[RMDB]
Conditions: 150 mM KOAc, 10 mM MgCl2 and 150 mM bicine (pH 8.5), 24 C. Structure probing data (DMS and 2A3) for a 207-nucleotide construct. Source: RMDB library RSTRND, as collected in RNAgym.
RNA sequence: GGGAACGACUCGAGUAGAGUCGAAAAGUGCUAGUGUCAACGACGUUGUCGUUGGCGCGACGUCAUCAAAUUGCGGGAAAUGUCCAGGACGAAAUGGGAUACCAAGCACGGCAGCACACGUCAUUCGUGCUGGAGUGUGGCCGAGUUAAUGCACUCGCGUCAAAAAUAGCUUCGGCUAUUUUUGACGAAAAGAAACAACAACAACAAC
Reactivity to DMS in 0.01 (KOAc 150mM, MgCl2 10mM, bicine 150mM(pH8.5), 24C), signal-to-noise 1, nucleotides 027 to 156: g050u000g020c040u000a050g040u000g010u000c040a040a020c000g000a010c000g020u010u000g020u000c000g020u000u000g030g030c070g020c000g020a060c060g010u010c050a030u000c090a080a070a090u000u020g030c060g010g000g000a030a080a170u000g000u010c060c000a170g040g000a070c050g040a030a060a090u030g010g040g000a130u000a090c010c020a060a160g020c000a030c000g000g040c010a040g020c030a020c010a060c090g040u000c130a190u000u000c040g030u000g030c020u000g000g020a090g000u000g000u000g000g010c080c040g020a070g040u000u000a110a150u000g050c070a020c000u000c030g040
Reactivity to 2A3 in 0.01 (KOAc 150mM, MgCl2 10mM, bicine 150mM(pH8.5), 24C), signal-to-noise 2, nucleotides 027 to 156: g130u120g030c050u090a000g010u000g010u000c000a020a010c020g010a010c110g260u120u260g000u180c010g000u020u000g000g020c000g000c000g000a010c000g020u050c000a040u020c040a040a060a120u100u120g030c010g010g000g030a010a060a150u100g010u000c010c000a020g010g020a030c040g060a030a060a060u060g030g000g000a010u020a130c000c040a050a020g000c040a000c020g060g000c030a010g030c030a000c010a010c060g130u130c080a140u150u060c050g010u000g040c010u020g030g000a010g030u050g010u040g030g000c000c000g000a010g030u060u070a060a030u150g010c030a010c000u010c000g040